[RMDB]
The record gives the reactivity of an RNA of 177 nucleotides to DMS. Reactivities are given for positions 27 through 126. The DMS profile rests on 1,048 reads. It was measured as part of the RMDB library M2PK90.
RNA sequence: GGGAACGACUCGAGUAGAGUCGAAAAUUUACGGGCCCGGGAGGAGGACCGAAUACACGCGCGCGAGGUCCUCCAGGUAGUACGAACGCGCGCGUGAAUAAUAGUAGUACCACCCGGGCCCACCGAAAUUAGCAAUAGUCUUCGGACUAUUGCUAAUAAAAGAAACAACAACAACAAC
Reactivity to DMS in 0.01 (KOAc 150mM, MgCl2 10mM, bicine 150mM(pH8.5), 24C), signal-to-noise 1, nucleotides 027 to 126: u020u020u000a060c100g000g040g000c000c010c010g000g000g010a130g020g010a020g000g010a000c010c020g030a180a120u010a130c010a030c000g000c000g000c000g010c020g010a050g000g030u010c000c000u010c010c010a020g010g010u010a090g000u000a000c000g000a160a230c020g000c000g000c000g000c020g000u000g000a110a080u000a140a060u010a080g010u000a100g000u000a020c000c030a170c010c000c020g010g000g030c000c000c000a000c010c020g010a130a100